Background:
An RNA of 177 nucleotides, treated with 2A3 and DMS and read out base by base.
[RMDB]
RNA sequence: GGGAACGACUCGAGUAGAGUCGAAAAGAUAUGGAUCAUGCUACCCACCUUAGUAAUCGGAAACGAUUAUAAGAGGCAUGAGUCCUAAGUCAAAACAUCCGACACCUCUUCGGAGGUGUCGGAUGAAGUACAAUUACACCUUCGGGUGUAAUUGUACAAAAGAAACAACAACAACAAC
Reactivity to 2A3 in 0.01 (KOAc 150mM, MgCl2 10mM, bicine 150mM(pH8.5), 24C), signal-to-noise 2, nucleotides 027 to 126: g080a020u260a130u300g000g000a000u000c000a000u000g030c000u190a280c030c030c000a050c040c010u090u000a070g220u140a230a000u000c020g030g030a040a000a090c000g000a000u020u000a000u010a020a000g050a020g000g000c020a010u020g010a020g290u040c000c000u060a150a000g160u180c130a060a020a110a080c000a050u010c020c000g000a000c000a000c000c030u070c030u120u200c300g190g000a000g020g000u020g010u000c000g000g000a000u000g000a010a000
Reactivity to DMS in 0.01 (KOAc 150mM, MgCl2 10mM, bicine 150mM(pH8.5), 24C), signal-to-noise 2, nucleotides 027 to 126: g050a100u020a120u010g020g000a220u010c010a020u000g010c010u010a090c000c010c030a300c090c010u020u000a040g040u000a000a000u010c000g020g000a110a130a110c010g010a010u000u010a020u000a010a000g000a090g010g000c000a010u000g000a020g000u010c000c020u000a060a090g010u000c120a070a130a150a210c010a010u000c000c030g030a010c000a000c000c000u000c020u010u010c150g040g000a000g020g050u000g010u000c000g000g000a000u000g000a020a040
Notes: In probing experiments dimethyl sulfate is read out at A N1 and C N3, which are open when not base-paired. The 2A3 profile rests on 1,866 reads. For DMS, 1,286 sequencing reads were counted. For DMS the reverse transcriptase was MarathonRT. The RNA was probed in 150 mM KOAc, 10 mM MgCl2 and 150 mM bicine (pH 8.5) at 24 C.